[RMDB]
RNA sequence: GGGAACGACUCGAGUAGAGUCGAAAAGGAUAACGAAAAUAAUUUAGCUUUAGCUGCGUAGUCAGCUAACGUCAGCCUGAGAGUCCCGCGACUCAGAGUCUGGCGUCGACAGCGGGGAACCGAGCCUUACAAAGCUUUGAGUAAGGAACGGAAUUUAGCGUUCAUAAAUGUUCGCAUUUAUGAACGCAAAAGAAACAACAACAACAAC
Reactivity to 2A3 in 0.01 (KOAc 150mM, MgCl2 10mM, bicine 150mM(pH8.5), 24C), signal-to-noise 2, nucleotides 027 to 156: g060g000a100u200a210a030c040g070a060a070a070a060u270a110a100u150u160u150a070g050c040u010u000u000a000g000c010u020g000c040g140u050a070g050u220c000a000g000c000u000a000a000c000g000u000c000a010g000c010c000u000g000a000g000a000g060u070c000c000c000g010c020g020a000c000u000c000a030g010a010g170u060c000u010g020g000c000g020u020c040g080a000c050a010g000c010g000g000g000g000a000a030c000c000g000a000g010c000c000u000u010a000c010a030a160a070g070c020u150u120u120g020a020g000u000a010a010g000g000a000a000c000g010g000a010a000u050u050u050a040